Structure probing data (DMS and 2A3) for a 177-nucleotide construct. For 2A3 the reverse transcriptase was SuperScript II with manganese. The DMS profile rests on 1,775 reads. For 2A3, 832 sequencing reads were counted. It was measured as part of the RMDB library OK2TRN. High 2A3 reactivity points to a flexible backbone, as in loops and unpaired stretches. The RNA was probed in 150 mM KOAc, 10 mM MgCl2 and 150 mM bicine (pH 8.5) at 24 C.
RNA sequence: GGGAACGACUCGAGUAGAGUCGAAAAAAAAGCUAUUAAUGUUUUGAGAGAAUUCAGGAAAGAGAUUGAAAGGAUGCUGAACAUCUUGAAUAGGAGACGCAGAUCUGCAGGCAUGAUCAUUAUGCUGGUCCUAAAUCCAUUUCGAUGGAUUUAGGACAAAAGAAACAACAACAACAAC
Reactivity to DMS in 0.01 (KOAc 150mM, MgCl2 10mM, bicine 150mM(pH8.5), 24C), signal-to-noise 2, nucleotides 027 to 126: a080a030a030a020g000c020u010a130u010u000a070a090u000g000u000u000u000u010g010a190g000a140g000a080a100u010u000c040a050g020g000a060a070a020g010a050g000a070u000u000g000a060a100a090g010g000a030u010g010c030u020g020a050a110c080a040u000c020u000u000g010a050a040u020a110g010g010a080g010a050c110g000c060a050g010a050u000c060u000g010c120a100g000g000c040a020u000g000a050u000c090a020u000u010a040u010g000c040u000g030
Reactivity to 2A3 in 0.01 (KOAc 150mM, MgCl2 10mM, bicine 150mM(pH8.5), 24C), signal-to-noise 1, nucleotides 027 to 126: a000a000a000a000g110c160u220a190u250u090a130a200u080g020u010u060u110u120g040a040g000a000g000a050a080u030u070c030a010g000g070a040a100a000g110a000g030a030u120u060g050a050a020a000g040g000a020u060g020c040u040g030a020a010c010a050u030c010u090u110g020a040a030u070a120g080g000a020g010a010c010g050c030a020g040a080u050c030u110g000c020a010g090g000c010a010u020g000a090u110c050a040u090u030a030u100g090c070u060g040